Background
The record gives the reactivity of an RNA of 177 nucleotides to DMS and 2A3.

RNA sequence: GGGAACGACUCGAGUAGAGUCGAAAAAAGAAAUCAAUCUUUUGGAUCCAGCCAGGGUCCUCUAGCAGAAAAGGGGGAUGGGGCUCUCUUGGGCUCUCCCCUCCACGCCUGCGGGAUUCUGAUGGGAUGUACAACACCUUUUCGAAGGUGUUGUACAAAAAGAAACAACAACAACAAC
Reactivity to DMS in 0.01 (KOAc 150mM, MgCl2 10mM, bicine 150mM(pH8.5), 24C), signal-to-noise 2, nucleotides 027 to 126: a000a030g010a010a120a210u040c300a100a120u020c000u000u000u000u000g000g020a090u000c000c000a090g010c050c030a040g010g000g010u020c000c000u000c090u020a060g000c010a050g000a140a160a100a070g010g010g000g000g050a030u050g000g000g000g000c000u000c000u000c070u000u020g000g010g000c000u010c000u000c090c050c000c000u010c000c030a070c260g030c300c000u000g020c100g000g040g000a000u000u000c010u000g000a160u010g000g000g010a190
Reactivity to 2A3 in 0.01 (KOAc 150mM, MgCl2 10mM, bicine 150mM(pH8.5), 24C), signal-to-noise 3, nucleotides 027 to 126: a000a000g150a020a050a050u220c080a030a040u030c040u030u050u020u090g090g040a020u040c000c000a010g100c070c000a000g020g000g000u000c010c010u000c090u110a020g000c010a000g070a070a040a050a050g000g020g000g010g000a040u130g060g000g000g020c000u000c000u030c040u180u270g020g010g000c010u010c030u050c040c000c000c000u010c000c000a050c060g080c000c000u000g000c000g000g000g000a000u020u020c010u000g010a010u030g010g000g030a030

DMS adducts were read by reverse transcription with MarathonRT.